[RMDB]
An RNA of 177 nucleotides, treated with 2A3 and read out base by base. Values cover nucleotides 27 to 126.
RNA sequence: GGGAACGACUCGAGUAGAGUCGAAAAUACAAUUACCUUAACCCCACAUUGACACUCGCACUACUCGAUUAAUUGGCAUUGUGCCGAUUGCAUUAAUGCCGGCUAAUCAAAUUUAGAGCUCAGCGGGGCCACCAUGAGUGUUCGCACUCAUGGUGGCAAAAGAAACAACAACAACAAC
Reactivity to 2A3 in 0.01 (KOAc 150mM, MgCl2 10mM, bicine 150mM(pH8.5), 24C), signal-to-noise 2, nucleotides 027 to 126: u220a000c110a070a100u210u110a230c000c020u130u120a100a020c000c000c000c000a050c070a080u100u210g110a010c000a030c090u000c000g000c000a030c050u060a020c000u100c030g000a000u000u000a020a030u020u040g000g000c000a000u040u000g010u000g000c000c040g140a110u090u270g000c000a000u090u200a240a000u040g000c000c000g000g000c010u030a000a030u020c020a160a000a020u190u240u110a050g000a020g000c050u060c050a030g000c000g010g000g010
Source information:
It was measured as part of the RMDB library OK1LIB.